[RMDB]
RNA sequence: GGGAACGACUCGAGUAGAGUCGAAAAGAAAGAAAAAAGGAAGUGCGCCUCUGUUAUAUUCGCCUGACGGCGAGCGAUAUUGUCCUUUGGACAGUGAUAUUAUGCUUCGCAUCGUGAUAUUGCCUAAAAGUAUGUGGCAAUUCGUUGCCACAUACUUAAAAGAAACAACAACAACAAC
Reactivity to DMS in 0.01 (KOAc 150mM, MgCl2 10mM, bicine 150mM(pH8.5), 24C), signal-to-noise 4, nucleotides 027 to 126: g000a100a050a090g000a010a030a060a060a060a050g010g010a090a090g010u000g010c050g000c050c000u000c070u000g010u030u020a050u030a060u020u020c030g020c000c010u000g040a090c170g000g010c020g000a030g010c100g020a070u010a000u000u010g000u000c000c010u030u010u010g000g000a060c060a070g000u010g010a040u000a040u000u010a060u020g010c060u020u010c100g000c050a060u000c080g020u010g000a070u000a030u010u000g000c050c050u020a050a060
Reactivity to 2A3 in 0.01 (KOAc 150mM, MgCl2 10mM, bicine 150mM(pH8.5), 24C), signal-to-noise 4, nucleotides 027 to 126: g010a020a020a000g070a000a050a030a010a010a000g070g040a040a040g080u030g060c050g040c000c010u040c000u040g050u120u100a070u020a050u160u040c050g010c020c010u090g090a050c060g020g000c010g010a020g000c000g020a010u000a040u130u080g090u040c000c020u040u120u250g000g000a010c010a010g020u050g090a020u020a050u200u130a090u120g040c020u060u070c040g000c040a030u000c010g010u000g010a040u030a070u140u180g060c010c030u150a170a150

An RNA of 177 nucleotides, treated with DMS and 2A3 and read out base by base.
Reactivities are rounded to 0.1 and cut off at 0 and 3.